[RMDB]
The record gives the reactivity of an RNA of 177 nucleotides to 2A3 and DMS. The DMS profile rests on 6,016 reads. Values are in units of 0.01, from 0 to 300, in steps of 10. The RNA was probed in 150 mM KOAc, 10 mM MgCl2 and 150 mM bicine (pH 8.5) at 24 C. It was measured as part of the RMDB library OK2TRN.

RNA sequence: GGGAACGACUCGAGUAGAGUCGAAAAGAGCGAUUUAAUAUUAGAUCGUCGCGAUCUAAACAGUCCGACACGCUGUCGCGGGGCAGCACCUCCCGGGAAAGGGCCCUUGGUACGAAUUCGAAAGAAACCAUCAGCAUAUAUUCGUAUAUGCUGAUGGAAAAGAAACAACAACAACAAC
Reactivity to 2A3 in 0.01 (KOAc 150mM, MgCl2 10mM, bicine 150mM(pH8.5), 24C), signal-to-noise 4, nucleotides 027 to 126: g070a000g010c050g010a000u010u070u250a290a150u170a190u200u120a030g030a060u040c020g100u060c050g050c110g130a000u000c010u030a040a050a100c030a020g030u000c010c000g030a020c040a020c140g020c020u030g000u050c010g030c060g120g070g010g000c000a000g000c000a020c010c010u010c010c010c000g010g020g020a090a100a030g030g020g000c000c010c020u020u080g080g000u060a010c050g040a070a130u040u070c040g030a090a050a040g060a060a050a020
Reactivity to DMS in 0.01 (KOAc 150mM, MgCl2 10mM, bicine 150mM(pH8.5), 24C), signal-to-noise 6, nucleotides 027 to 126: g000a130g010c020g000a040u000u000u010a070a170u010a150u000u000a030g000a010u000c030g000u010c150g020c100g010a040u000c040u010a040a060a120c140a080g010u000c030c020g010a100c090a080c160g010c020u000g010u000c030g010c150g010g000g000g010c040a040g000c040a140c070c030u000c010c010c010g000g000g020a040a070a110g000g000g010c020c020c050u000u000g010g010u000a050c080g000a080a120u000u000c040g000a100a080a140g010a060a070a220
Values cover nucleotides 27 to 126.